The record gives the reactivity of an RNA of 177 nucleotides to 2A3 and DMS. For 2A3 the reverse transcriptase was SuperScript II with manganese. Source: RMDB library OK2TST, as collected in RNAgym. Values cover nucleotides 27 to 126. The DMS profile rests on 10,384 reads. The reactions ran in a buffer of 150 mM KOAc, 10 mM MgCl2 and 150 mM bicine (pH 8.5), at 24 C.

RNA sequence: GGGAACGACUCGAGUAGAGUCGAAAAUAUCGAGCAGCGCACAAUGGGCGUUGGCAUGCUGGAUCGUAAAAUCGCUCGUGAUUUCAGCCCAGUUGGCCCGAUGAUCCGCGCCAGUGGCUAUGCACGCACUAAUCAAUUCGUUCGCGAAUUGAUUAGUAAAAGAAACAACAACAACAAC
Reactivity to 2A3 in 0.01 (KOAc 150mM, MgCl2 10mM, bicine 150mM(pH8.5), 24C), signal-to-noise 5, nucleotides 027 to 126: u140a020u030c030g010a020g030c010a000g020c030g040c040a020c040a150a230u150g040g050g000c030g010u040u060g030g010c030a010u100g020c010u090g000g030a050u050c050g040u090a040a060a040a070u050c040g020c070u030c060g090u130g040a070u030u100u100c040a020g010c000c020c000a030g050u080u090g080g020c020c020c010g010a050u120g000a030u010c030c030g010c010g020c020c000a030g020u050g040g000c020u020a040u120g030c030a020c040g020c010
Reactivity to DMS in 0.01 (KOAc 150mM, MgCl2 10mM, bicine 150mM(pH8.5), 24C), signal-to-noise 7, nucleotides 027 to 126: u010a110u010c040g010a070g020c040a100g020c060g010c050a070c100a130a100u010g010g010g010c020g010u010u000g010g000c060a070u000g010c040u010g010g010a030u000c050g010u010a060a040a060a070u000c070g000c150u010c170g010u010g000a070u000u010u000c110a110g000c050c010c030a080g000u010u010g010g020c010c030c060g010a070u010g000a070u010c060c030g010c110g000c030c020a050g010u000g000g010c040u000a060u000g010c050a070c090g020c200